This 177-nucleotide RNA was probed chemically with DMS and 2A3. The reactions ran in a buffer of 150 mM KOAc, 10 mM MgCl2 and 150 mM bicine (pH 8.5), at 24 C. It was measured as part of the RMDB library OK1LIB.
RNA sequence: GGGAACGACUCGAGUAGAGUCGAAAACGUACUGGGGUAUGCAGAGGUGUGCCGAUCGCCGGCCUACAAGGCGCUGAGUGAAAAGGAGGCUCGCGAAAUCGAUGCAGUGGCACAUGAACUCGGUGCCAAUAGCUGCCUGAUUCGUCAGGCAGCUAUUAAAAGAAACAACAACAACAAC
Reactivity to DMS in 0.01 (KOAc 150mM, MgCl2 10mM, bicine 150mM(pH8.5), 24C), signal-to-noise 3, nucleotides 027 to 126: c060g000u020a120c010u020g000g020g000g000u000a060u030g000c020a040g000a060g000g000u010g000u030g000c030c000g000a070u000c040g040c030c050g000g020c020c010u000a080c130a120a080g010g000c040g010c040u000g000a070g010u030g000a090a100a110a110g000g000a170g010g000c000u020c290g010c000g000a020a120a110u030c070g030a100u020g010c050a130g000u000g000g020c010a090c050a080u000g010a120a130c030u010c030g010g020u010g000c000c010
Reactivity to 2A3 in 0.01 (KOAc 150mM, MgCl2 10mM, bicine 150mM(pH8.5), 24C), signal-to-noise 2, nucleotides 027 to 126: c060g030u160a000c040u100g000g000g010g030u060a020u100g010c080a010g030a020g120g050u080g010u050g030c010c010g000a030u120c000g040c010c040g020g000c000c000u080a120c080a030a080g040g000c020g000c040u040g030a050g030u050g010a110a080a000a000g120g010a040g070g000c000u030c020g030c010g020a120a090a010u120c130g050a080u170g060c000a010g020u050g030g000c020a010c020a080u060g060a030a000c000u000c020g000g010u010g000c000c030